[RMDB]
RNA sequence: GGGAACGACUCGAGUAGAGUCGAAAAGGAGAGUGGCACGUACUUGAGAUCCCAGCUCUCCAGCGUGAUAUCACGCUCGAGUGCCACACCAAAGAACAGGUGGGGGAGCACCACCUGUGCGGCGAACAUUUAUGCUCCACUUCGGUGGAGCAUAAAUAAAAGAAACAACAACAACAAC
Reactivity to DMS in 0.01 (KOAc 150mM, MgCl2 10mM, bicine 150mM(pH8.5), 24C), signal-to-noise 5, nucleotides 027 to 126: g010g020a080g010a070g020u000g010g010c000a020c020g000u040a140c120u000u020g010a140g000a100u010c010c000c030a160g010c130u020c020u010c030c070a050g000c010g020u000g000a240u050a170u030c020a000c010g020c000u010c190g010a100g020u000g000c000c010a060c060a120c120c070a040a130a100g000a100a030c000a010g010g000u000g000g010g000g000g010a220g000c120a140c000c000a000c000c010u000g000u000g010c080g020g010c150g030a110a130c210
Reactivity to 2A3 in 0.01 (KOAc 150mM, MgCl2 10mM, bicine 150mM(pH8.5), 24C), signal-to-noise 9, nucleotides 027 to 126: g080g010a050g010a020g030u010g000g000c010a010c050g070u220a080c100u100u120g030a040g020a090u050c010c000c010a050g020c030u040c000u000c020c000a000g000c000g000u020g080a210u130a100u300c010a000c010g000c000u010c010g020a010g010u020g010c020c000a000c000a000c000c070a130a120a050g040a060a030c000a000g000g010u000g000g000g000g010g020a060g040c020a060c010c000a000c010c000u000g010u020g000c020g040g010c050g050a050a030c020
This 177-nucleotide RNA was probed chemically with DMS and 2A3. For 2A3 the reverse transcriptase was SuperScript II with manganese. Conditions: 150 mM KOAc, 10 mM MgCl2 and 150 mM bicine (pH 8.5), 24 C. Values cover nucleotides 27 to 126. The 2A3 profile rests on 9,934 reads. For DMS the reverse transcriptase was MarathonRT.